The data come from the RNA Mapping Database (RMDB), library OK2TST. Structure probing data (2A3 and DMS) for a 177-nucleotide construct. High DMS reactivity at an A or C suggests that its Watson-Crick edge is free.
[RMDB]
RNA sequence: GGGAACGACUCGAGUAGAGUCGAAAAAUAUAAUACCGCAUCGAGAACCAAGGAACUUUUUUCCCCUUCUAACGAUCCUGUCAGAUUGUAUACCUGCGGUCCUACAGUAUAUGACUAUGCGCAUAUCCUGGCUGUGUAAAUUCGUUUACACAGCCAGAAAAGAAACAACAACAACAAC
Reactivity to 2A3 in 0.01 (KOAc 150mM, MgCl2 10mM, bicine 150mM(pH8.5), 24C), signal-to-noise 1, nucleotides 027 to 126: a000u170a020u090a180a120u130a030c010c010g050c010a030u050c080g100a050g000a140a030c060c060a050a050g000g050a050a120c050u170u030u040u000u050u160c000c000c000c000u000u030c020u020a060a040c050g030a030u000c060c030u050g090u150c000a010g000a010u020u030g010u070a090u080a120c030c060u020g000c010g000g000u000c000c010u050a020c030a040g020u090a060u000a000u080g040a040c010u040a100u220g170c160g060c060a010u010a020u130c010
Reactivity to DMS in 0.01 (KOAc 150mM, MgCl2 10mM, bicine 150mM(pH8.5), 24C), signal-to-noise 1, nucleotides 027 to 126: a120u000a040u030a060a080u000a100c030c020g000c020a070u010c010g010a140g000a050a090c110c060a090a110g000g000a010a080c300u010u000u080u000u000u010c000c000c030c090u000u000c060u000a060a080c090g010a020u000c060c080u000g010u010c120a140g010a030u000u010g000u000a060u000a170c110c040u000g020c050g000g000u000c050c010u010a080c080a050g000u020a080u000a010u000g010a010c050u000a050u010g060c130g030c010a030u010a060u000c070